[RMDB]
Notes
An RNA of 177 nucleotides, treated with 2A3 and read out base by base. 2A3 adducts were read by reverse transcription with SuperScript II with manganese. It was measured as part of the RMDB library RFM100. Reactivities are given for positions 27 through 126. For 2A3, 366 sequencing reads were counted.
RNA sequence: GGGAACGACUCGAGUAGAGUCGAAAAUGCGUAAUAGCUCACUGGUCAAGUGAUCCUGCGCCGACAAUGUAGCGGGGCUCAAGUACACCGCCGAAGCCGCGGCAUUCACAUAACACCCAUGCGGGUCCAGCAGAUGGCCGUUCGCGGCCAUCUGCUGAAAAGAAACAACAACAACAAC
Reactivity to 2A3 in 0.01 (KOAc 150mM, MgCl2 10mM, bicine 150mM(pH8.5), 24C), signal-to-noise 1, nucleotides 027 to 126: u110g020c010g040u000a000a040u000a160g000c000u020c020a110c020u170g170g170u220c000a040a010g080u000g000a060u000c000c000u020g060c000g000c000c000g000a040c000a040a040u150g030u070a010g000c000g000g000g000g050c020u050c120a100a000g000u040a010c060a030c010c000g000c010c010g090a050a000g040c000c000g010c000g040g040c010a040u150u030c070a070c000a100u230a050a050c040a110c000c030c020a050u100g010c070g060g000g000u000c000